[RMDB]
RNA sequence: GGGAACGACUCGAGUAGAGUCGAAAAGAAGAAGAUGCCUUCGACACACGCAAAGGCGACAAGGCGUUGCGCGAACGGUGCAUCGGAAGUCAUCCAAGUCUGAGCCCAUUCAGCUUUUCGUUUGACCGCAGGGACAGUAUCGAUCGCUUGGAAGAGGUCUAGUUUAGAGAUUCGUCUCUAAACUAGAAAAAGAAACAACAACAACAAC
Reactivity to DMS in 0.01 (KOAc 150mM, MgCl2 10mM, bicine 150mM(pH8.5), 24C), signal-to-noise 5, nucleotides 027 to 156: g000a100a120g020a140a080g010a050u000g010c040c020u000u010c020g010a110c070a100c040a080c040g030c030a060a140a110g020g010c020g020a080c070a110a160g010g020c090g010u000u010g020c040g030c030g020a130a090c070g030g010u000g020c030a070u000c020g020g010a070a050g000u000c030a080u000c020c040a050a130g000u000c040u000g000a160g020c020c020c020a190u010u000c040a110g020c050u000u000u000u000c050g010u000u000u000g010a090c040c050g020c080a110g020g020g020a070c030a110g020u000a130u000c040g010a070u010c050g020c050u000u000g010g010a060a070g010a100g000g010
Reactivity to 2A3 in 0.01 (KOAc 150mM, MgCl2 10mM, bicine 150mM(pH8.5), 24C), signal-to-noise 9, nucleotides 027 to 156: g070a020a000g040a030a020g020a020u040g010c010c000u040u020c020g050a030c010a010c020a020c080g040c060a080a060a070g130g010c050g030a070c080a060a100g140g010c050g040u040u050g040c120g000c010g060a070a020c060g050g020u090g020c020a050u040c040g020g020a020a010g030u040c020a020u020c030c020a040a030g050u020c020u040g030a030g040c020c000c010a020u080u060c020a010g010c020u090u070u080u160c090g080u060u060u160g070a060c040c030g020c090a070g010g000g050a030c020a050g050u080a050u170c050g040a040u070c050g040c080u030u070g040g020a050a030g050a030g030g030